An RNA of 207 nucleotides, treated with 2A3 and DMS and read out base by base. The DMS profile rests on 1,594 reads. Reactivities are given for positions 27 through 156. For DMS the reverse transcriptase was MarathonRT. Conditions: 150 mM KOAc, 10 mM MgCl2 and 150 mM bicine (pH 8.5), 24 C.
RNA sequence: GGGAACGACUCGAGUAGAGUCGAAAACGUACGUGGAGACACGUACGACGUGACUUCGGUCACGAAUGGAGGCAACUCCUGCGCCUCCCGCGCGAGGCGUCGGUGGUCGGCGAGCCCACGGACGCAAAAACUCGCGCGCAGAUAACUAGCAGGAGAACUCAUACCUACGAUUCGUCGUAGGUAUGAGAAAAGAAACAACAACAACAAC
Reactivity to 2A3 in 0.01 (KOAc 150mM, MgCl2 10mM, bicine 150mM(pH8.5), 24C), signal-to-noise 2, nucleotides 027 to 156: c010g000u020a000c010g000u000g020g020a040g020a040c020a000c000g000u010a000c000g010a000c000g000u000g000a000c000u030u020c300g080g000u000c010a000c000g020a060a080u070g010g000a000g000g000c030a120a300c070u000c010c000u000g000c010g000c000c000u000c010c000c030g000c000g000c000g000a010g020g000c000g000u010c070g110g000u000g000g010u010c040g030g220c230g070a050g000c000c000c000a000c000g100g010a020c000g000c050a020a040a040a080a100c020u000c000g000c000g000c000g000c000a000g000a030u160a070a060c140u050a110g000c000a010g000g010a000g010a010a000
Reactivity to DMS in 0.01 (KOAc 150mM, MgCl2 10mM, bicine 150mM(pH8.5), 24C), signal-to-noise 1, nucleotides 027 to 156: c010g040u000a000c000g100u010g030g030a300g000a170c000a020c000g050u060a030c020g000a190c060g020u000g000a020c010u000u000c300g040g020u040c030a000c000g000a150a120u000g020g000a050g050g010c040a110a070c000u000c000c000u010g000c020g040c020c000u000c010c000c000g040c040g000c030g000a060g000g020c000g060u000c060g000g090u000g040g000u000c000g040g000c130g010a210g010c300c000c020a000c030g000g010a020c000g030c200a100a010a010a030a300c000u000c010g000c000g090c010g070c070a030g000a230u000a040a130c150u000a150g050c000a030g000g020a040g000a070a070